The record gives the reactivity of an RNA of 177 nucleotides to DMS and 2A3.
As a SHAPE reagent, 2A3 marks flexible, mostly unpaired nucleotides at the ribose 2'-OH.
Source: RMDB library TTRDEL, as collected in RNAgym.
For 2A3 the reverse transcriptase was SuperScript II with manganese.
RNA sequence: GGGAACGACUCGAGUAGAGUCGAAAAGAUAUGGAGGAUAACGGGAGCUGAGUCGGAAACGACCAGCGACGAUCGUUGAUCCUCCUAAGUCAAAAGAGGUUUAGUCAGUUCGCUGACUAAACCUCAACACGACAUUACUGUUCGCAGUAAUGUCGUGAAAAGAAACAACAACAACAAC
Reactivity to DMS in 0.01 (KOAc 150mM, MgCl2 10mM, bicine 150mM(pH8.5), 24C), signal-to-noise 2, nucleotides 027 to 126: g000a040u000a300u010g000g000a020g010g010a010u000a020a010c000g000g000g010a060g020c000u000g000a120g000u010c000g020g000a070a090a200c000g000a020c000c010a010g010c020g000a030c210g000a040u010c010g000u000u000g000a030u000c010c000u000c000c010u000a000a050g020u010c050a100a050a140a070g000a030g000g000u000u000u000a000g020u000c000a020g020u000u000c210g010c000u010g000a010c000u000a000a000a010c000c000u010c000a000a060
Reactivity to 2A3 in 0.01 (KOAc 150mM, MgCl2 10mM, bicine 150mM(pH8.5), 24C), signal-to-noise 1, nucleotides 027 to 126: g030a000u110a050u200g000g010a000g000g000a000u000a040a000c000g010g000g000a010g020c010u000g020a030g140u000c000g010g000a080a060a030c020g020a000c010c000a010g020c020g100a010c020g000a010u020c010g010u010u080g110a040u000c010c000u000c000c010u000a010a010g010u030c010a000a000a020a130g010a010g000g000u020u030u020a000g010u000c020a010g010u040u140c180g020c300u020g000a000c000u000a000a000a000c000c000u000c000a010a000